[RMDB]
RNA sequence: GGGAACGACUCGAGUAGAGUCGAAAAGAGAGACCGAGGCUCCCCGAGAAGAACCUCAGGCUGCAGGUGACAGCAGGGCAAGGUGCCUGGUCUGGCCCCAGGACCAGCCUGGCUCCCUGAGAGCACAUAACCUAGUGAGCUUCGGCUCACUAGGUUAAAAAGAAACAACAACAACAAC
Reactivity to DMS in 0.01 (KOAc 150mM, MgCl2 10mM, bicine 150mM(pH8.5), 24C), signal-to-noise 1, nucleotides 027 to 126: g010a170g000a080g010a080c010c020g010a120g010g000c050u000c030c010c070c030g010a130g020a050a180g010a070a160c040c040u000c060a110g010g020c030u000g040c070a030g000g000u000g000a130c120a000g020c000a230g020g010g070c130a130a140g000g000u000g010c030c030u000g030g030u000c010u000g000g010c100c110c010c050a230g000g000a020c110c000a070g010c020c000u010g010g020c100u000c010c010c070u020g000a150g010a030g020c090a070c170a120